[RMDB]
RNA sequence: GGGAACGACUCGAGUAGAGUCGAAAAGCAACUUAGGAUUUUAUGCUCCCCGUGCGUGUCUCGAACCAUGCCGGGCCAAACCCACGGGGGCUGGCGGUCCCCGUGCGGUCAAAAUCAAACCGCUGGAAAAACAGUUCUAGCUUCGGCUAGAACUGAAGGUCUUCCUAAUGUUCGCAUUAGGAAGACCAAAAGAAACAACAACAACAAC
Reactivity to 2A3 in 0.01 (KOAc 150mM, MgCl2 10mM, bicine 150mM(pH8.5), 24C), signal-to-noise 1, nucleotides 027 to 156: g000c010a010a110c140u150u090a070g000g150a130u080u130u050u060a150u180g010c010u100c000c000c000c000g040u170g030c020g030u020g020u010c150u060c300g120a080a010c010c010a000u020g000c000c010g000g000g000c000c030a060a020a020c000c000c000a000c000g000g000g000g000g000c000u000g000g010c000g000g000u000c000c000c000c000g010u010g000c060g000g010u020c000a000a040a050a110u040c010a010a110a280c000c040g020c020u060g030g030a060a070a080a000a020c000a000g000u000u000c000u010a040g000c010u040u040c210g090g000c010u000a000g000a010a000c000u000g000a000a030
This 207-nucleotide RNA was probed chemically with 2A3. The RNA was probed in 150 mM KOAc, 10 mM MgCl2 and 150 mM bicine (pH 8.5) at 24 C. 2A3 is a SHAPE reagent: it acylates the 2'-hydroxyl of flexible nucleotides of all four kinds. 2A3 adducts were read by reverse transcription with SuperScript II with manganese.